[RMDB]
The data come from the RNA Mapping Database (RMDB), library OK2TST. This 177-nucleotide RNA was probed chemically with 2A3 and DMS. The 2A3 profile rests on 9,637 reads. For DMS the reverse transcriptase was MarathonRT. Values cover nucleotides 27 to 126. The RNA was probed in 150 mM KOAc, 10 mM MgCl2 and 150 mM bicine (pH 8.5) at 24 C.

RNA sequence: GGGAACGACUCGAGUAGAGUCGAAAAUCAAGAGACGAUUCGUUUAGCCCUGACUGCUGCUGAAACCGGGCACUUGGUAUUGGCGACAUUACACACUCGCACCGCGACUCAAGCCAUCGAUCGGCUGACCGAAGUAAUAGUUCGCUAUUACUUCGGUAAAAGAAACAACAACAACAAC
Reactivity to 2A3 in 0.01 (KOAc 150mM, MgCl2 10mM, bicine 150mM(pH8.5), 24C), signal-to-noise 5, nucleotides 027 to 126: u050c020a050a040g040a010g030a100c060g050a090u060u070c040g070u060u080u150a030g010c000c010c000u010g060a060c030u050g020c030u030g000c010u040g050a080a040a030c040c020g000g040g010c060a040c050u050u100g050g000u070a070u060u110g030g020c020g010a020c010a020u070u180a090c080a010c000a010c050u030c010g010c010a060c030c020g030c030g060a040c000u020c100a050a000g000c000c010a070u100c040g100a080u060c040g030g010c010u020g020
Reactivity to DMS in 0.01 (KOAc 150mM, MgCl2 10mM, bicine 150mM(pH8.5), 24C), signal-to-noise 7, nucleotides 027 to 126: u000c070a110a130g010a130g010a100c050g000a050u000u000c060g020u000u000u000a130g000c020c010c020u010g000a110c100u000g000c030u000g010c030u000g000a030a080a100c110c070g010g010g010c070a050c060u000u000g000g010u000a050u000u000g010g010c100g020a070c060a040u000u000a060c080a080c080a080c080u000c050g010c040a090c050c030g010c050g010a070c070u000c060a050a100g010c040c020a050u000c080g000a090u000c070g000g010c030u000g000